[RMDB]
RNA sequence: GGGAACGACUCGAGUAGAGUCGAAAAACUCAUCAUUUUUUAUGGCUACGUAGUAUUCCAUGGUGUAUAUGUGCCACAUUUUCUUAAUCCAGUCUAUCAUUGUUGGACAUUUGGGUUGGUUCCAAGUCUUCGCUAUUGUGAAUAGUGCCGCAAUAAACGAUCCAUUAUUAUUCGUAAUAAUGGAUCGAAAAGAAACAACAACAACAAC
Reactivity to DMS in 0.01 (KOAc 150mM, MgCl2 10mM, bicine 150mM(pH8.5), 24C), signal-to-noise 3, nucleotides 027 to 156: a060c140u010c190a140u020c070a040u020u000u030u010u000u010a040u040g010g010c010u000a050c070g020u000a110g040u010a050u000u000c000c040a170u010g020g030u000g030u010a110u000a050u010g010u000g000c010c020a030c030a050u000u000u000u000c020u000u000a070a140u010c020c020a100g020u000c040u000a100u010c060a110u000u000g010u000u000g020g000a060c040a110u000u010u000g030g030g020u000u010g030g020u010u000c020c030a030a210g020u010c030u000u000c050g040c040u000a070u010u010g030u000g010a070a070u000a070g020u000g010c060c060g000c050a080a060u000a030a070a180
Reactivity to 2A3 in 0.01 (KOAc 150mM, MgCl2 10mM, bicine 150mM(pH8.5), 24C), signal-to-noise 5, nucleotides 027 to 156: a010c050u040c040a050u030c020a060u170u100u010u070u060u160a080u150g030g000c020u060a030c050g040u070a060g050u020a120u050u070c040c040a070u070g040g000u060g080u030a040u010a030u200g050u050g080c050c000a030c000a030u140u180u050u030c030u040u150a060a060u000c020c010a030g050u010c060u060a070u090c040a120u080u140g040u060u080g010g000a010c030a100u020u090u020g020g000g020u020u030g020g010u040u040c040c000a060a030g010u000c040u050u030c070g000c020u030a040u120u090g050u000g060a050a050u030a070g030u000g050c020c020g030c060a030a050u060a080a070a010